Record summary
Structure probing data (2A3) for a 207-nucleotide construct. Values cover nucleotides 27 to 156. Conditions: 150 mM KOAc, 10 mM MgCl2 and 150 mM bicine (pH 8.5), 24 C. 2A3 adducts were read by reverse transcription with SuperScript II with manganese. Reactivities are rounded to 0.1 and cut off at 0 and 3. The data come from the RNA Mapping Database (RMDB), library M2RFPK.
[RMDB]
RNA sequence: GGGAACGACUCGAGUAGAGUCGAAAAGAGCGAUUAGACAAGGGGGUAGAGCUACAUAUUAGAUAGCUGUAUAAUCGUUCAAGUUACAUCAAAACAUCUUCAAUAUUUAUUACUUACUUUCCUUUCUGCCAGAGUACGGUAUUCGUACCGUACUCAACGUGGGCUGUUAAUUCGUUAACAGCCCACGAAAAGAAACAACAACAACAAC
Reactivity to 2A3 in 0.01 (KOAc 150mM, MgCl2 10mM, bicine 150mM(pH8.5), 24C), signal-to-noise 2, nucleotides 027 to 156: g000a000g000c000g000a000u000u110a110g140a140c300a300a300g020g000g030g050g000u070a070g000a040g040c050u060a000c000a110u200a210u230u110a060g110a300u050a000g000c000u030g010u050a050u020a000a000u020c000g000u000u000c020a040a000g010u060u110a050c050a050u150c080a090a090a030a170c020a000u030c050u220u120c060a120a000u050a210u120u120u140a210u130u080a010c020u130u010a100c000u030u050u030c000c020u010u040u090c050u040g040c010c050a080g000a000g020u000a000c020g050g000u000a050u030u000c050g030u010a020c000c000g000u000a000c010u000c000a000a000